[RMDB]
RNA sequence: GGGAACGACUCGAGUAGAGUCGAAAAGGGCAGGCCGGUCACGACGGUGCAGGCGCAGCUCACGCGGCAGUCACAGCGUCAGCGACCGCAGGGCGAGGCCCGACUGGGACGCCUGAAGCCGGGGCUCCCAUCCGAUGAGAUUCGUCUCAUCGGAUGGAAAAGAAACAACAACAACAAC
Reactivity to DMS in 0.01 (KOAc 150mM, MgCl2 10mM, bicine 150mM(pH8.5), 24C), signal-to-noise 4, nucleotides 027 to 126: g020g000g010c030a110g030g010c060c010g010g010u000c060a070c070g000a100c050g000g000u000g000c040a300g020g000c010g040c010a080g000c020u010c160a100c230g020c050g010g020c060a050g000u000c090a110c050a090g010c020g000u010c050a080g010c010g000a040c020c000g010c100a150g000g010g010c010g000a170g000g010c000c010c010g000a050c160u000g010g000g010a100c070g000c010c010u000g000a090a150g010c010c030g020g010g000g020c060u000c020
Reactivity to 2A3 in 0.01 (KOAc 150mM, MgCl2 10mM, bicine 150mM(pH8.5), 24C), signal-to-noise 2, nucleotides 027 to 126: g020g000g000c040a020g040g150c000c040g010g020u070c030a030c140g100a040c020g160g060u020g030c040a030g030g000c030g030c050a010g020c000u030c040a100c100g090c070g050g000c040a060g060u080c040a030c000a130g040c030g030u030c010a010g040c020g070a080c000c020g050c050a020g000g000g040c040g020a070g100g080c000c000c000g060a040c040u120g030g010g010a010c020g010c000c000u010g040a030a040g040c000c000g000g000g040g010c010u030c010

An RNA of 177 nucleotides, treated with DMS and 2A3 and read out base by base.
High 2A3 reactivity points to a flexible backbone, as in loops and unpaired stretches.
For 2A3, 2,622 sequencing reads were counted.
The DMS profile rests on 3,900 reads.
Source: RMDB library OK2TST, as collected in RNAgym.